[RMDB]
RNA sequence: GGGAACGACUCGAGUAGAGUCGAAAAGUGCCUGGGCAGAGGCUUGUGGGAGCUGAGGCCACACUCAGUCUGUCCUCUUGAGCACGUGGAUGAAGUAGCAGGGAAUGUAGGUUUGGCCUGGCUUGUAUCAUUACCAUACAUUCGUGUAUGGUAAUGAAAAAGAAACAACAACAACAAC
Reactivity to 2A3 in 0.01 (KOAc 150mM, MgCl2 10mM, bicine 150mM(pH8.5), 24C), signal-to-noise 9, nucleotides 027 to 126: g050u030g030c010c010u030g000g010g000c030a020g010a030g080g010c000u060u060g050u050g020g040g020a100g020c050u050g080a040g030g090c040c010a020c000a000c000u040c000a050g180u000c010u030g070u030c000c020u040c030u060u160g030a060g010c020a010c070g030u060g040g030a100u090g030a070a030g020u080a020g030c030a020g020g000g050a090a060u100g030u100a030g060g030u030u070u080g030g000c010c010u020g030g020c020u040u070g050u040a080
Reactivity to DMS in 0.01 (KOAc 150mM, MgCl2 10mM, bicine 150mM(pH8.5), 24C), signal-to-noise 9, nucleotides 027 to 126: g010u000g010c020c020u000g010g010g010c030a030g010a080g010g010c060u000u000g020u000g010g000g010a130g010c040u010g010a070g010g010c020c080a050c060a090c020u000c030a060g000u000c030u000g010u000c010c010u000c160u010u000g010a120g010c030a050c080g010u000g010g000a080u000g000a070a070g010u000a060g010c050a070g000g000g010a080a080u010g010u000a060g010g000u000u000u000g010g000c030c030u000g000g010c050u000u000g010u000a140
This 177-nucleotide RNA was probed chemically with 2A3 and DMS. The 2A3 profile rests on 43,628 reads. For 2A3 the reverse transcriptase was SuperScript II with manganese. The reactions ran in a buffer of 150 mM KOAc, 10 mM MgCl2 and 150 mM bicine (pH 8.5), at 24 C. The DMS profile rests on 84,403 reads. It was measured as part of the RMDB library OK2TST.